[RMDB]
RNA sequence: GGGAACGACUCGAGUAGAGUCGAAAAGAUGAUAAGCAAGUCAACAUCAAUCUAUGAGUGUCGGAGAAGGGUUUUGAGAAUGUAGCAAUUUUUAUUAAUUGUGUUAUAGCUUGAGACUUGGAUACGAGUAUGACUUAAUGUUCGCAUUAAGUCAUACAAAAGAAACAACAACAACAAC
Reactivity to 2A3 in 0.01 (KOAc 150mM, MgCl2 10mM, bicine 150mM(pH8.5), 24C), signal-to-noise 5, nucleotides 027 to 126: g040a030u080g010a000u060a140a030g060c100a120a020g100u140c030a030a050c010a040u020c010a030a030u010c020u090a090u130g070a050g110u090g040u050c030g000g030a070g010a060a040g000g010g000u000u010u030u030g020a020g000a060a060u070g010u020a010g000c010a010a010u020u020u010u050u110a200u200u150a040a010u000u000g010u010g030u060u050a070u040a030g010c000u010u020g010a010g010a020c030u020u040g050g020a030u040a070c020g010a020
Reactivity to DMS in 0.01 (KOAc 150mM, MgCl2 10mM, bicine 150mM(pH8.5), 24C), signal-to-noise 8, nucleotides 027 to 126: g000a060u010g000a090u010a070a140g020c120a110a110g000u000c050a060a100c070a050u000c020a110a100u000c050u010a060u010g010a120g010u000g010u000c030g000g010a050g020a290a170g000g000g010u000u000u000u000g000a020g010a030a060u010g010u000a200g010c010a020a010u000u000u000u010u020a100u060u000a010a010u000u000g000u000g000u010u000a030u000a050g010c010u000u000g010a050g000a010c020u000u000g010g000a290u010a040c100g010a120
Chemical mapping of a 177-nucleotide RNA with 2A3 and DMS. Source: RMDB library RFMREP, as collected in RNAgym. The reactions ran in a buffer of 150 mM KOAc, 10 mM MgCl2 and 150 mM bicine (pH 8.5), at 24 C.